Description: This 177-nucleotide RNA was probed chemically with DMS.
[RMDB]
RNA sequence: GGGAACGACUCGAGUAGAGUCGAAAAGUCAAAGUCCCCGGCGUCCCAUAUCGCGUAGGACGCGGGCGCGCCGGGCACCAGGGUGCCGAUCCGGCCGUCUCGAACACCACCGGCCCGCCAGCCGCCGGUUGGUACGGUGGUUCGCCACCGUACCAACAAAAGAAACAACAACAACAAC
Reactivity to DMS in 0.01 (KOAc 150mM, MgCl2 10mM, bicine 150mM(pH8.5), 24C), signal-to-noise 1, nucleotides 027 to 126: g000u000c070a040a080a180g000u010c100c000c030c070g020g010c010g000u000c070c000c040a150u010a080u020c100g000c160g040u000a070g050g000a300c060g030c080g010g000g050c100g000c100g010c030c010g010g000g010c100a020c030c090a060g000g050g010u000g000c050c070g000a130u010c120c030g000g000c020c050g020u000c030u000c060g010a120a130c070a080c080c050a050c020c000g010g040c000c010c050g010c090c000a010g020c080c090g000c000c020g000
For DMS, 958 sequencing reads were counted. Values are in units of 0.01, from 0 to 300, in steps of 10.